[RMDB]
RNA sequence: GGGAACGACUCGAGUAGAGUCGAAAACGACGGAAGGAGGAAACACCAUCGGAGUAAUGCCAAUGGAGAGCGACUGCAGCGCGGAUGCCUUGAGCGGAAGCAGUGCCUCGAGGAAAUCCAGACGAGAGUGAGUAUAGCAUUUCGAUGCUAUACUCACAAAAGAAACAACAACAACAAC
Reactivity to 2A3 in 0.01 (KOAc 150mM, MgCl2 10mM, bicine 150mM(pH8.5), 24C), signal-to-noise 3, nucleotides 027 to 126: c030g070a010c040g040g050a010a060g010g040a020g020g050a070a080a010c030a020c050c010a020u030c040g030g010a040g020u140a120a100u170g040c020c010a020a050u080g030g010a060g000a000g010c040g060a030c040u060g030c030a050g060c020g000c010g040g010a040u100g010c020c000u040u080g040a020g010c020g030g040a080a010g060c050a000g040u030g060c000c000u000c010g000a000g000g040a080a160a010u010c010c010a030g050a090c050g040a050g020a010
Reactivity to DMS in 0.01 (KOAc 150mM, MgCl2 10mM, bicine 150mM(pH8.5), 24C), signal-to-noise 4, nucleotides 027 to 126: c070g010a110c060g020g000a070a050g010g000a120g000g000a070a070a100c120a110c060c020a050u010c050g000g000a100g000u010a090a100u010g000c040c040a090a030u000g000g000a060g010a070g020c060g000a050c050u000g020c040a060g020c080g010c100g000g000a130u000g010c060c040u000u000g000a060g000c080g030g000a140a110g010c100a040g000u000g010c110c040u000c020g020a070g000g020a040a110a070u000c030c040a150g010a140c070g010a070g010a170
Structure probing data (2A3 and DMS) for a 177-nucleotide construct. Source: RMDB library OK2TST, as collected in RNAgym.